[RMDB]
RNA sequence: GGGAACGACUCGAGUAGAGUCGAAAAGGUAUCCACUUCGGUGGAUACCAAAGGCGAUCCCAGCAUCAGGGAACAACAACAAUAGAUGCUUCCCUAACGCCAAAAUUCCGGAUUUCGAUCCGGAAAACGAAGAAAUUCAGUUCGCUGAAUUUCUUCGAAAAGAAACAACAACAACAAC
Reactivity to 2A3 in 0.01 (KOAc 150mM, MgCl2 10mM, bicine 150mM(pH8.5), 24C), signal-to-noise 2, nucleotides 027 to 126: g000g010u010a000u040c000c000a020c000u050u060c190g110g000u010g010g000a010u000a000c010c000a020a040a000g030g000c010g010a110u000c010c010c000a000g080c020a090u140c090a040g020g000g060a100a040c040a040a000c010a030a000c020a140a150u080a190g080a080u060g030c000u000u050c010c000c010u000a080a050c020g000c010c000a130a080a010a000u060u000c000c000g010g010a000u060u090u080c150g030a000u000c000c000g000g000a000a020a000a000
Reactivity to DMS in 0.01 (KOAc 150mM, MgCl2 10mM, bicine 150mM(pH8.5), 24C), signal-to-noise 2, nucleotides 027 to 126: g000g010u000a000u000c000c000a000c000u000u010c130g010g030u010g000g000a020u000a000c000c000a040a120a070g020g010c020g050a130u010c030c000c000a210g020c190a100u000c090a070g020g000g000a040a040c100a030a060c060a060a150c140a120a040u060a100g000a100u000g010c080u000u000c000c000c000u000a070a160c010g040c020c070a200a110a090a160u000u000c000c000g000g010a020u000u010u000c120g000a030u000c000c000g010g000a020a000a030a110